[RMDB]
RNA sequence: GGGAACGACUCGAGUAGAGUCGAAAAAUGCCUUCGGGCAUCUGCUCCCGUAGGUUGUUUGUCAGCCUGUAACAGGACGAUGAAAUUCGAAAGAGUGGAGUCCUGGAUAAAGGCUUGGAUUUAACAACCUAAACGGAAUCCGAGCGUUCGCGCUCAAACAUGGGGUAAUUUUCGAAUUACCCCAUGUAAAAGAAACAACAACAACAAC
Reactivity to DMS in 0.01 (KOAc 150mM, MgCl2 10mM, bicine 150mM(pH8.5), 24C), signal-to-noise 1, nucleotides 027 to 156: a020u010g020c010c030u020u050c300g030g040g010c010a000u000c040u020g020c030u010c020c000c000g000u000a010g020g010u000u010g020u010u000u000g020u030c030a090g000c000c000u000g020u000a260a300c010a040g020g000a070c010g000a160u010g000a120a060a030u010u000c000g010a220a160a300g000a040g040u010g020g020a210g020u000c000c000u010g020g000a060u000a120a240a020g030g000c010u000u000g030g000a020u020u000u000a050a030c010a000a040c000c010u010a010a050a180c050g000g010a130a100u000c110c020g020a070g010c000g000u000u020c130g020c050g000c050u000c020a070a120
Reactivity to 2A3 in 0.01 (KOAc 150mM, MgCl2 10mM, bicine 150mM(pH8.5), 24C), signal-to-noise 2, nucleotides 027 to 156: a010u000g010c000c020u030u070c290g060g010g010c010a000u020c060u120g030c040u080c020c000c000g000u000a010g000g010u000u000g000u000u000u010g010u000c000a010g000c000c000u000g000u000a030a010c000a000g000g030a000c000g030a090u050g030a030a020a030u020u030c010g020a070a090a120g010a050g010u030g010g020a030g000u010c000c000u000g010g000a010u030a000a020a010g000g000c010u010u150g060g010a020u230u190u260a000a000c000a000a010c000c010u020a080a070a000c030g030g070a090a100u270c160c150g020a030g010c000g020u070u050c180g000c010g040c040u040c000a050a080